[RMDB]
RNA sequence: GGGAACGACUCGAGUAGAGUCGAAAAAGUACACUGUUAAAAAGGGGGAGAGUAAAAAGCGCAAAAGGGGUGUAUACAUAAGUGUAAGCUAGUGUACACGCAUGUGUGGUAUGGGCUUAUGCCGGGCCGAGGGUAUGGGAUUCGUCCCAUACCCUCGAAAAGAAACAACAACAACAAC
Reactivity to DMS in 0.01 (KOAc 150mM, MgCl2 10mM, bicine 150mM(pH8.5), 24C), signal-to-noise 2, nucleotides 027 to 126: a140g020u020a020c050a090c040u000g000u020u020a030a030a060a080a070g000g040g010g000g000a050g010a050g000u000a050a110a090a080a030g030c050g030c060a020a040a070a060g000g000g000g010u000g010u000a050u010a040c000a030u020a080a070g000u000g010u020a030a060g000c020u010a060g000u020g020u000a000c020a000c030g000c140a050u020g000u010g040u010g000g000u000a050u000g000g000g000c060u000u010a040u020g010c000c060g010g010g010c120
Reactivity to 2A3 in 0.01 (KOAc 150mM, MgCl2 10mM, bicine 150mM(pH8.5), 24C), signal-to-noise 2, nucleotides 027 to 126: a000g070u090a090c150a000c040u120g060u150u220a160a190a030a050a050g070g000g000g000g000a080g000a000g020u060a060a130a050a090a000g070c160g000c120a000a160a000a000g000g000g030g010u030g020u000a100u000a020c090a060u170a100a050g010u080g090u200a060a000g030c000u030a030g000u000g000u100a000c060a010c030g100c100a070u060g130u080g000u090g130g010u060a120u040g060g000g050c040u070u020a010u070g050c000c060g010g020g020c030